This 207-nucleotide RNA was probed chemically with DMS and 2A3. 2A3 adducts were read by reverse transcription with SuperScript II with manganese. Values are in units of 0.01, from 0 to 300, in steps of 10.
RNA sequence: GGGAACGACUCGAGUAGAGUCGAAAAUUGUUCUUGCACAUAGUAACCUGCUCAUAAUCGCGACAUUUGUGUAUUGUAUAGUUUCUAUAAUUAUGUCUAAUUCAGUUCUUCUAACUUGUCUCUGAUUAAAAGUCAGCAUUCACUGUCCUCAUUAGUACAGCAAAAUGAUAUUCGUAUCAUUUUGCUGAAAAGAAACAACAACAACAAC
Reactivity to DMS in 0.01 (KOAc 150mM, MgCl2 10mM, bicine 150mM(pH8.5), 24C), signal-to-noise 2, nucleotides 027 to 156: u010u010g020u010u000c050u000u000g010c020a100c070a080u060a150g010u010a080a090c050c030u010g000c030u020c060a150u010a110a070u000c050g050c060g020a080c050a120u000u010u000g010u010g020u000a060u000u010g000u000a090u000a110g000u000u000u000c010u020a130u000a050a100u000u000a090u010g010u010c010u000a040a090u000u000c030a020g010u000u000c060u000u010c020u010a060a070c030u010u000g010u010c060u000c020u000g000a100u000u000a050a060a060a140g000u000c030a020g020c060a100u000u000c040a060c040u000g030u000c020c030u000c030a110u040u000a100g010u000a170
Reactivity to 2A3 in 0.01 (KOAc 150mM, MgCl2 10mM, bicine 150mM(pH8.5), 24C), signal-to-noise 5, nucleotides 027 to 156: u050u050g020u050u030c030u030u070g000c030a030c010a070u060a020g030u040a090a080c010c000u030g030c010u030c050a100u120a220a120u120c080g000c040g090a030c050a080u070u130u020g050u000g030u050a070u090u080g030u040a080u040a190g010u020u040u030c070u030a130u040a140a160u180u130a060u110g020u000c020u040a050a050u070u040c010a010g060u060u000c020u050u030c030u040a030a110c020u040u030g010u020c010u020c000u050g020a070u090u130a060a130a040a020g040u030c010a000g010c000a050u000u090c010a010c050u040g040u020c010c030u050c060a010u130u200a030g100u270a030